[RMDB]
RNA sequence: GGGAACGACUCGAGUAGAGUCGAAAAUAUAUCUGUGUGUCAGUUAUACAGAAAUUGCAUGUUCUGAUCCAAAAAUCAGACCACUUGCUGGACAGAUCUACAGCAAAGGCAUGAGCCAAACAUCUAGGUAUCUUGUGCAGGCUGAAAAUGUGUUACAUAAUGCCAUUUUAUUCGUAAAAUGGCAUUAAAAAGAAACAACAACAACAAC
Reactivity to DMS in 0.01 (KOAc 150mM, MgCl2 10mM, bicine 150mM(pH8.5), 24C), signal-to-noise 3, nucleotides 027 to 156: u000a070u000a060u000c020u020g000u000g010u010g010u010c100a150g000u010u010a090u000a100c040a070g000a050a110a100u010u000g010c070a120u000g000u000u000c010u010g010a030u000c030c010a060a040a040a080a020u000c000a040g000a040c050c090a080c090u000u000g010c010u000g020g010a300c070a120g000a120u000c010u010a090c010a030g020c030a030a040a110g030g000c020a050u000g010a130g030c030c030a090a080a080c060a060u010c090u010a130g000g010u000a050u000c030u000u000g030u000g000c020a130g010g010c010u000g000a050a040a090a070u000g030u000g000u000u000a080c070a180
Reactivity to 2A3 in 0.01 (KOAc 150mM, MgCl2 10mM, bicine 150mM(pH8.5), 24C), signal-to-noise 3, nucleotides 027 to 156: u150a000u030a050u010c010u030g010u000g030u000g060u040c000a030g060u090u050a060u020a110c030a010g080a040a100a050u150u130g050c060a030u070g030u050u000c010u000g020a070u040c120c140a080a100a000a000a020u020c010a000g020a030c020c000a050c050u060u070g010c020u020g010g020a010c010a040g060a010u000c050u070a020c010a000g010c030a060a030a000g040g010c000a020u040g020a040g050c010c000a040a080a010c040a040u080c050u080a040g000g050u100a090u130c030u010u050g020u030g010c040a020g010g010c020u040g020a030a040a030a080u080g070u010g060u120u090a030c020a020